Chemical mapping of a 177-nucleotide RNA with DMS. The RNA was probed in 150 mM KOAc, 10 mM MgCl2 and 150 mM bicine (pH 8.5) at 24 C. DMS adducts were read by reverse transcription with MarathonRT. Values cover nucleotides 27 to 126. The data come from the RNA Mapping Database (RMDB), library OK2TST.
[RMDB]
RNA sequence: GGGAACGACUCGAGUAGAGUCGAAAAAUAGAGUUCAUGGGCAACAGCGUUUGGACGGGACCCAUUGGUUGAAUUUUCUUGUUUACUUCACGUAGGUCAUGGAGGAGGUGAAACCCUUCGCCCGUUCUAUGUAAUGCAGCUUCGGCUGCAUUACAUAAAAAGAAACAACAACAACAAC
Reactivity to DMS in 0.01 (KOAc 150mM, MgCl2 10mM, bicine 150mM(pH8.5), 24C), signal-to-noise 1, nucleotides 027 to 126: a090u020a110g020a090g010u000u000c080a110u000g010g020g000c020a060a110c110a060g020c060g000u000u000u000g000g000a080c060g020g060g020a120c010c000c010a120u010u020g030g010u020u010g010a070a060u010u000u000u000c110u020u000g010u000u000u000a080c050u000u000c070a020c150g020u000a060g010g030u020c070a070u010g010g020a100g000g000a060g020g020u010g010a130a100a150c130c030c080u000u000c100g020c020c000c020g020u010u000c040